[RMDB]
RNA sequence: GGGAACGACUCGAGUAGAGUCGAAAAGCGACUGGCUGCUGAUCGUAUUCGCCGUCAUCGACGUUUCCAGAUCCACCGUCGAGGUCUGGUGAUGAUUGUCGUAGUCGCCUGUGGCCAUCUUGAGGGCAGGCAGUAGUACUUUCGAGUACUACUGCCUAAAAGAAACAACAACAACAAC
Reactivity to 2A3 in 0.01 (KOAc 150mM, MgCl2 10mM, bicine 150mM(pH8.5), 24C), signal-to-noise 6, nucleotides 027 to 126: g050c020g030a040c040u030g030g050c020u020g000c030u080g050a080u070c040g050u130a100u040u100c010g010c000c000g010u010c010a060u040c000g050a050c040g040u030u120u100c030c000a020g020a050u030c040c010a060c070c060g080u080c040g030a070g000g020u020c100u170g020g020u020g010a050u040g010a000u020u170g040u040c020g020u020a030g030u030c010g020c000c000u080g040u130g080g000c000c010a060u090c070u050u100g050a150g010g040g020c020
Reactivity to DMS in 0.01 (KOAc 150mM, MgCl2 10mM, bicine 150mM(pH8.5), 24C), signal-to-noise 2, nucleotides 027 to 126: g000c020g000a020c020u000g000g030c020u040g010c040u030g000a010u000c050g010u000a110u020u010c060g000c020c030g020u010c010a050u000c020g000a000c020g010u030u030u000c040c010a050g000a070u030c030c040a070c110c020g000u000c040g000a020g010g020u010c020u040g030g020u000g010a030u010g010a100u010u000g000u010c050g000u000a050g020u000c030g000c090c030u000g020u030g010g000c030c010a070u030c050u000u010g010a110g000g020g000c120
This 177-nucleotide RNA was probed chemically with 2A3 and DMS. Conditions: 150 mM KOAc, 10 mM MgCl2 and 150 mM bicine (pH 8.5), 24 C. 2A3 adducts were read by reverse transcription with SuperScript II with manganese.